[RMDB]
The data come from the RNA Mapping Database (RMDB), library OK2TST. This 177-nucleotide RNA was probed chemically with 2A3 and DMS. For 2A3 the reverse transcriptase was SuperScript II with manganese. The reactions ran in a buffer of 150 mM KOAc, 10 mM MgCl2 and 150 mM bicine (pH 8.5), at 24 C.

RNA sequence: GGGAACGACUCGAGUAGAGUCGAAAAAGAGAGAAUACUAGACAACAUAACAGACUAUGUAAUGGAGAAGACCAAUCUGAGAUCAACGUUCAGAUAUGGGGCUAGUGUGUGUGCACUACUGUCCCCACCAUAUAGGUUCCUUCGGGAACCUAUAUGGAAAAGAAACAACAACAACAAC
Reactivity to 2A3 in 0.01 (KOAc 150mM, MgCl2 10mM, bicine 150mM(pH8.5), 24C), signal-to-noise 4, nucleotides 027 to 126: a000g160a000g020a010g030a140a050u080a120c020u040a050g050a080c020a070a000c010a100u100a070a030c030a060g160a080c050u080a050u210g040u100a090a090u100g050g020a070g010a080a020g030a050c020c020a040a020u000c010u000g010a020g010a080u130c080a080a070c080g040u040u030c010a010g010a020u070a150u120g000g000g000g020c000u000a000g010u010g000u010g030u020g060u150g030c030a010c030u060a030c020u080g080u280c000c010c000c010a000
Reactivity to DMS in 0.01 (KOAc 150mM, MgCl2 10mM, bicine 150mM(pH8.5), 24C), signal-to-noise 4, nucleotides 027 to 126: a060g010a110g010a100g000a140a060u000a080c060u000a060g000a050c070a110a070c040a040u000a070a070c080a090g010a130c100u000a050u000g010u000a060a040u010g000g000a140g030a090a080g010a080c050c030a030a030u000c010u010g000a020g010a060u020c170a050a080c250g000u010u000c050a020g010a040u010a100u010g010g010g000g000c040u000a000g000u000g000u000g010u010g020u010g010c030a040c020u000a030c150u010g010u000c010c000c000c080a080